An RNA of 177 nucleotides, treated with DMS and 2A3 and read out base by base.
The 2A3 profile rests on 3,554 reads.
Source: RMDB library TTRDEL, as collected in RNAgym.
The reactions ran in a buffer of 150 mM KOAc, 10 mM MgCl2 and 150 mM bicine (pH 8.5), at 24 C.
Reactivities are given for positions 27 through 126.
[RMDB]
RNA sequence: GGGAACGACUCGAGUAGAGUCGAAAAGAUAUGGACUGAGCCAGUUGUCAGGCUGUGUCUCGGAAACGAGACCCAGCCUUGGAUUUACUGGUGUAAGUCCUAAGUCAAAGCUAUCUUCGGAUAGCAAGCAUACUGAUCUGUUCGCAGAUCAGUAUGCAAAAGAAACAACAACAACAAC
Reactivity to DMS in 0.01 (KOAc 150mM, MgCl2 10mM, bicine 150mM(pH8.5), 24C), signal-to-noise 2, nucleotides 027 to 126: g000a040u000a300u000g000g000a030c010u000g010a300g000c000c010a020g010u000u000g000u010c010a050g010g000c000u000g060u000g000u000c010u000c000g000g000a060a030a190c000g010a000g000a000c000c040c020a000g000c000c000u000u000g000g020a020u010u010u000a000c000u010g000g010u030g020u020a260a110g000u000c000c000u010a000a070g000u000c040a090a090a110g010c000u000a000u000c010u010u000c120g010g010a000u030a000g010c000a040a110
Reactivity to 2A3 in 0.01 (KOAc 150mM, MgCl2 10mM, bicine 150mM(pH8.5), 24C), signal-to-noise 2, nucleotides 027 to 126: g040a000u080a020u130g000g000a000c010u020g010a020g030c000c000a020g000u030u030g010u050c010a010g020g010c000u000g010u010g010u060c010u030c000g050g020a100a080a040c020g000a000g010a020c010c000c000a010g000c050c010u010u070g010g000a000u270u200u200a020c000u020g000g000u010g010u000a000a000g000u000c010c000u010a030a000g000u000c070a130a010a060g020c000u010a020u010c010u070u120c280g150g000a000u000a000g000c010a010a020